[RMDB]
RNA sequence: GGGAACGACUCGAGUAGAGUCGAAAACUCUAUUAUUGGUGGACUAGCAAUAAAGUACUUUGCAAGUACAUGCAACACUUCAAACUUCUAUGUAAUUAGUGCAUUAUUGUUCAACCCCAUGAAUAAUAUAUAAAAGGUAACUGUUCGCAGUUACCAACAACCACGAGAGGUUCGCCUCUCGUGGUUGAAAAGAAACAACAACAACAAC
Reactivity to 2A3 in 0.01 (KOAc 150mM, MgCl2 10mM, bicine 150mM(pH8.5), 24C), signal-to-noise 1, nucleotides 027 to 156: c010u050c030u010a040u090u020a040u000u040g060g000u020g020g000a010c010u040a030g000c000a000a010u020a010a050a090g000u000a020c010u060u080u130g030c040a050a000g030u050a020c020a020u100g000c000a140a120c020a100c090u090u160c110a090a190a140c090u150u030c080u110a140u130g020u090a060a150u260u050a020g000u000g000c000a020u030u020a000u000u020g020u050u040c040a030a020c040c000c000c000a000u000g020a010a010u020a020a000u010a010u040a000u110a030a130a060a000g020g000u010a000a000c010u000g010u040u060c170g010c100a010g000u000u000a000c000c000a010a000
About this RNA: An RNA of 207 nucleotides, treated with 2A3 and read out base by base. For 2A3 the reverse transcriptase was SuperScript II with manganese.